RNA sequence: GGGAACGACUCGAGUAGAGUCGAAAAGACACUGCGUACUUCCAUGUUGAUUUUAUCAAGAUCACUGAUAGCUUUCUCAAUUGCAGCAUUGAAUUUCAUCAAAUCUUUUUCAUCAACUUUCAAAUUAUGAUAAGGUAGGGUUCGCCCUACCUUAUCAAAAAGAAACAACAACAACAAC
Reactivity to DMS in 0.01 (KOAc 150mM, MgCl2 10mM, bicine 150mM(pH8.5), 24C), signal-to-noise 2, nucleotides 027 to 126: g010a120c080a090c120u000g010c070g000u000a050c060u000u000c030c030a110u000g010u010u010g000a060u000u010u000u000a040u010c100a030a050g000a050u000c040a040c070u000g000a020u000a110g030c080u000u010u010c090u000c020a020a060u000u010g000c110a070g000c100a050u000u010g010a070a100u000u000u000c010a050u000c050a020a070a050u000c010u000u020u020u000u000c140a070u010c080a010a050c130u000u020u000c040a040a050a110u010u000a110